Record summary
The record gives the reactivity of an RNA of 177 nucleotides to 2A3. Reactivities are given for positions 27 through 126. It was measured as part of the RMDB library OK1LIB. The 2A3 profile rests on 332 reads.

RNA sequence: GGGAACGACUCGAGUAGAGUCGAAAAAAGUUGGAACAACCGUUAACGAUAGCUGGUAUAUUUACGUUUAAACCUAAUGAAGAUGAUCGUGAUGGUGAAGUGCCAUAUCAUUCACGUGAAAAAUUAGCCACCCCAACUUGUUCGCAAGUUGGGGUGGAAAAGAAACAACAACAACAAC
Reactivity to 2A3 in 0.01 (KOAc 150mM, MgCl2 10mM, bicine 150mM(pH8.5), 24C), signal-to-noise 1, nucleotides 027 to 126: a000a110g040u140u010g270g000a160a000c000a000a000c130c000g040u030u010a000a070c000g000a000u000a000g000c000u000g000g000u010a120u030a030u120u180u060a000c100g010u000u000u220a080a040a040c000c010u090a060a000u090g230a110a010g160a120u100g040a010u110c000g000u000g070a050u300g030g040u000g010a000a000g000u060g000c000c000a000u030a040u070c070a050u000u120c000a000c030g210u120g080a300a000a000a000a000u000u080a000g000